[RMDB]
An RNA of 177 nucleotides, treated with 2A3 and DMS and read out base by base. For 2A3, 1,924 sequencing reads were counted. For 2A3 the reverse transcriptase was SuperScript II with manganese. The data come from the RNA Mapping Database (RMDB), library TTRDEL. Values are in units of 0.01, from 0 to 300, in steps of 10. As a SHAPE reagent, 2A3 marks flexible, mostly unpaired nucleotides at the ribose 2'-OH. DMS adducts were read by reverse transcription with MarathonRT. Conditions: 150 mM KOAc, 10 mM MgCl2 and 150 mM bicine (pH 8.5), 24 C.
RNA sequence: GGGAACGACUCGAGUAGAGUCGAAAAGAUAUGGACAAGGAACUACAGCAUAGACAGUGAUGACCUCGGAAACGAGCAAGCUGUUUAUGCUGCCUUGUCCUAAGUCAAACACUACUUCGGUAGUGAACACCGACCUAUUCUUCGGAAUAGGUCGGUGAAAAGAAACAACAACAACAAC
Reactivity to 2A3 in 0.01 (KOAc 150mM, MgCl2 10mM, bicine 150mM(pH8.5), 24C), signal-to-noise 1, nucleotides 027 to 126: g030a010u060a020u130g010g000a000c000a010a000g000g020a080a010c120u220a090c300a010g000c010a000u000a010g010a000c010a010g040u030g140a300u140g070a100c060c010u000c010g010g020a110a090a040c010g000a000g000c000a060a130g020c010u000g000u000u000u000a010u020g070c010u000g080c000c000u000u000g010u000c000c000u000a010a010g000u040c010a120a040a010c020a020c010u020a020c000u060u080c300g180g000u000a000g000u040g000a060a040
Reactivity to DMS in 0.01 (KOAc 150mM, MgCl2 10mM, bicine 150mM(pH8.5), 24C), signal-to-noise 1, nucleotides 027 to 126: g000a000u000a300u000g000g000a000c020a000a010g100g000a080a000c110u040a300c000a000g000c000a000u000a020g000a000c020a020g040u020g000a160u020g000a070c300c000u000c000g000g000a070a050a160c020g010a020g000c080a080a150g030c000u000g000u000u000u000a000u000g020c000u000g000c000c000u000u000g010u010c000c000u000a110a030g020u000c010a140a080a230c010a020c000u020a000c000u000u020c220g000g000u000a010g040u030g040a080a170